[RMDB]
RNA sequence: GGGAACGACUCGAGUAGAGUCGAAAAGAUAUGGACGAUUACAGGACAUGAUAUGCGGUCGGAAACGACCGACAUAUCAACAGCCUGACGAUCGUCCUAAGUCAAAGACCUGGCUUCGGCCAGGUCACGACUGUCAUAGGUUCGCCUAUGACAGUCGAAAAGAAACAACAACAACAAC
Reactivity to 2A3 in 0.01 (KOAc 150mM, MgCl2 10mM, bicine 150mM(pH8.5), 24C), signal-to-noise 1, nucleotides 027 to 126: g030a010u030a030u110g000g000a000c000g000a000u000u030a040c010a010g040g000a050c140a290u300g010a010u000a000u000g000c010g000g010u000c000g010g000a000a010a020c000g000a000c000c000g000a000c000a000u000a000u000c010a010a000c040a010g010c050c000u020g020a130c200g000a010u010c000g000u000c000c020u000a010a030g010u000c010a200a000a050g000a000c000c020u000g050g000c010u090u230c300g030g000c000c020a000g160g010u000c020a000
Reactivity to DMS in 0.01 (KOAc 150mM, MgCl2 10mM, bicine 150mM(pH8.5), 24C), signal-to-noise 1, nucleotides 027 to 126: g030a070u010a290u010g010g000a030c010g040a010u000u000a180c000a030g000g030a000c030a300u000g000a010u010a000u010g000c010g000g000u000c000g000g000a060a050a120c000g010a000c010c000g000a060c020a000u000a000u020c000a080a070c300a180g000c000c000u000g010a060c090g000a000u000c000g040u010c020c000u010a010a110g000u000c040a120a150a130g000a040c000c000u000g050g000c000u000u020c300g020g020c000c010a000g010g000u000c000a010
Annotation
An RNA of 177 nucleotides, treated with 2A3 and DMS and read out base by base. Values cover nucleotides 27 to 126. The data come from the RNA Mapping Database (RMDB), library TTRDES. For 2A3, 2,321 sequencing reads were counted. Conditions: 150 mM KOAc, 10 mM MgCl2 and 150 mM bicine (pH 8.5), 24 C.